Conditions: 150 mM KOAc, 10 mM MgCl2 and 150 mM bicine (pH 8.5), 24 C. Chemical mapping of a 177-nucleotide RNA with DMS and 2A3. High DMS reactivity at an A or C suggests that its Watson-Crick edge is free.
[RMDB]
RNA sequence: GGGAACGACUCGAGUAGAGUCGAAAAUCGCAGCGCGCGUCUAGCCAGAAGCCUGAGCCCCAGAGCAUCCCGGGAGCGCCGCGGGCCGGUGCUCGGCUCGUUGGGCCAUGCAGCGGCGGCCGCCGCGGACACAAUUUUUGUUCGCAAAAAUUGUGUCAAAAGAAACAACAACAACAAC
Reactivity to DMS in 0.01 (KOAc 150mM, MgCl2 10mM, bicine 150mM(pH8.5), 24C), signal-to-noise 1, nucleotides 027 to 126: u020c030g010c050a170g030c040g020c240g020c030g010u000c010u020a120g010c000c030a130g000a300a130g000c030c070u000g020a130g020c030c010c000c130a140g000a030g000c020a090u000c040c030c060g000g010g010a030g000c010g030c020c000g000c040g020g000g030c160c010g020g020u000g000c010u020c040g010g000c020u010c010g010u010u000g000g000g000c010c020a040u000g020c020a050g000c300g010g020c010g010g000c070c060g030c030c020g020c000g020
Reactivity to 2A3 in 0.01 (KOAc 150mM, MgCl2 10mM, bicine 150mM(pH8.5), 24C), signal-to-noise 1, nucleotides 027 to 126: u060c020g000c090a050g020c010g000c030g020c000g030u000c050u140a190g040c010c000a180g150a300a010g030c000c020u040g010a060g000c000c010c000c030a010g000a000g010c010a060u160c070c100c010g120g090g010a000g000c020g010c010c020g010c000g030g200g020c240c000g030g000u000g000c010u010c000g050g010c000u000c000g090u100u200g000g010g000c000c000a000u010g000c020a000g040c030g000g000c000g000g000c020c030g010c000c020g000c060g000
Record summary: Reactivities are given for positions 27 through 126. Source: RMDB library RFMREP, as collected in RNAgym.